[RMDB]
RNA sequence: GGGAACGACUCGAGUAGAGUCGAAAAACCACUUGGAAUGAAAGUGUUCGAUGGAAGACCACAGCGCAUAUGGACCGAAGCGGAGGUUGAUAUAACUCCUGACCCUGCGAAUCUUGAUGCACGAGUGAGUGCAUGCAGUGUUCGCACUGCAUGCACUAAAAGAAACAACAACAACAAC
Reactivity to DMS in 0.01 (KOAc 150mM, MgCl2 10mM, bicine 150mM(pH8.5), 24C), signal-to-noise 2, nucleotides 027 to 126: a110c060c000a130c100u010u000g000g020a120a050u000g010a120a050a060g010u010g020u010u000c080g010a060u000g030g020a030a020g000a060c050c030a050c020a080g020c020g010c070a010u000a100u020g010g000a060c050c060g020a080a100g020c100g010g020a090g010g000u000u000g000a120u000a070u000a100a050c090u000c050c050u000g030a110c020c010c010u020g040c070g000a040a080u000c040u000u000g010a100u000g010c110a070c040g000a090g010u000g010
Reactivity to 2A3 in 0.01 (KOAc 150mM, MgCl2 10mM, bicine 150mM(pH8.5), 24C), signal-to-noise 1, nucleotides 027 to 126: a000c000c010a020c040u010u050g100g070a100a050u070g090a140a110a070g040u020g030u120u020c020g050a040u090g000g100a080a020g040a060c010c010a010c000a000g010c000g030c050a020u040a020u160g010g020a020c010c020g020a060a000g040c030g000g020a050g060g010u070u090g060a050u090a040u050a120a030c020u020c020c020u020g040a020c000c020c000u010g000c010g040a010a050u020c010u020u150g030a020u090g050c050a030c110g020a030g050u120g040